[RMDB]
Structure probing data (2A3) for a 177-nucleotide construct. The RNA was probed in 150 mM KOAc, 10 mM MgCl2 and 150 mM bicine (pH 8.5) at 24 C. It was measured as part of the RMDB library OK1LIB. Values cover nucleotides 27 to 126.
RNA sequence: GGGAACGACUCGAGUAGAGUCGAAAACUCAGAUCUGAACAUCGAUGGUCUCUAAACAUGGUAGACACGUGUGGGUCUGUGGGGGAAUGUACUGGAGGUGGAGAUGCAUCGUGUUGACGAUCUUGAGGGCAGACUAAGCUUUCGAGCUUAGUCUGCCAAAAGAAACAACAACAACAAC
Reactivity to 2A3 in 0.01 (KOAc 150mM, MgCl2 10mM, bicine 150mM(pH8.5), 24C), signal-to-noise 2, nucleotides 027 to 126: c010u000c000a010g000a020u000c010u110g010a010a000c020a110u170c040g000a010u000g020g020u040c000u000c020u040a280a250a000c020a020u030g000g010u090a030g110a100c040a010c050g060u080g060u050g000g000g070u070c070u150g010u060g010g010g000g000g000a160a100u120g010u150a090c100u120g040g060a070g050g000u110g070g000a000g020a010u070g270c010a000u000c000g010u010g000u030u050g010a040c100g000a000u000c000u010u120g000a050g000